[RMDB]
RNA sequence: GGGAACGACUCGAGUAGAGUCGAAAAAAAGAUAUGGACAGCACCGAGCGAUGGUGCCGUUUGACGGACGAUCGGAAACGAUCGUCCCGAGGCACUGUCGCGUUUGACGUGCUGUCCUAAGUCAAAACCAUAAUUGUAACUUCGGUUACAAUUAUGGAAAAGAAACAACAACAACAAC
Reactivity to DMS in 0.01 (KOAc 150mM, MgCl2 10mM, bicine 150mM(pH8.5), 24C), signal-to-noise 9, nucleotides 027 to 126: a050a070a060g010a030u010a300u000g000g000a020c000a010g000c000a010c010c030g000a120g000c000g010a010u000g010g010u000g000c000c010g000u010u010u000g030a250c300g000g000a020c000g010a010u000c000g010g000a100a090a140c000g010a000u000c000g020u000c000c010c000g000a040g010g010c000a000c000u000g010u000c000g020c000g010u000u000u000g010a130c300g000u000g010c000u010g000u000c000c000u000a010a060g010u010c020a090a080a110a190
Reactivity to 2A3 in 0.01 (KOAc 150mM, MgCl2 10mM, bicine 150mM(pH8.5), 24C), signal-to-noise 4, nucleotides 027 to 126: a000a000a030g080a040u100a050u110g000g000a010c000a000g010c000a000c010c040g050a030g010c000g010a010u010g010g010u000g010c000c000g040u120u300u240g030a020c010g000g000a000c000g000a000u000c000g020g020a040a070a030c010g000a000u000c000g000u000c000c000c000g010a040g000g000c010a000c000u010g010u010c010g010c000g000u010u030u060g050a030c030g010u000g000c010u000g000u000c000c000u000a000a000g010u000c010a000a020a050a100
The data come from the RNA Mapping Database (RMDB), library TTRDES.
Structure probing data (DMS and 2A3) for a 177-nucleotide construct.
The reactions ran in a buffer of 150 mM KOAc, 10 mM MgCl2 and 150 mM bicine (pH 8.5), at 24 C.
For 2A3 the reverse transcriptase was SuperScript II with manganese.